Background:
Structure probing data (2A3) for a 177-nucleotide construct. The 2A3 profile rests on 922 reads. 2A3 adducts were read by reverse transcription with SuperScript II with manganese. The data come from the RNA Mapping Database (RMDB), library OK1LIB.

RNA sequence: GGGAACGACUCGAGUAGAGUCGAAAACUGGACGCCAAACAACCCUGAACCAUCCGCUGCUUGGAGGAAUUUCGCGAGAUCUUGCCCACAUGGGUGCUGCACUCGGCGGAUCGUUUUCGAGUGGCUGGAGGCUAUAGUGCUUCGGCACUAUAGCCUCAAAAGAAACAACAACAACAAC
Reactivity to 2A3 in 0.01 (KOAc 150mM, MgCl2 10mM, bicine 150mM(pH8.5), 24C), signal-to-noise 1, nucleotides 027 to 126: c000u000g040g030a020c100g100c040c010a090a150a090c070a070a060c030c000c000u030g030a010a030c090c000a050u050c000c000g020c000u030g020c000u060u090g000g030a000g020g090a090a110u010u040u090c040g010c010g000a010g030a170u020c000u050u130g010c020c000c000a200c010a260u090g010g020g000u060g040c090u030g000c010a010c000u030c000g020g030c020g030g040a030u010c040g010u000u000u070u000c020g010a000g040u080g030g000c080u050g030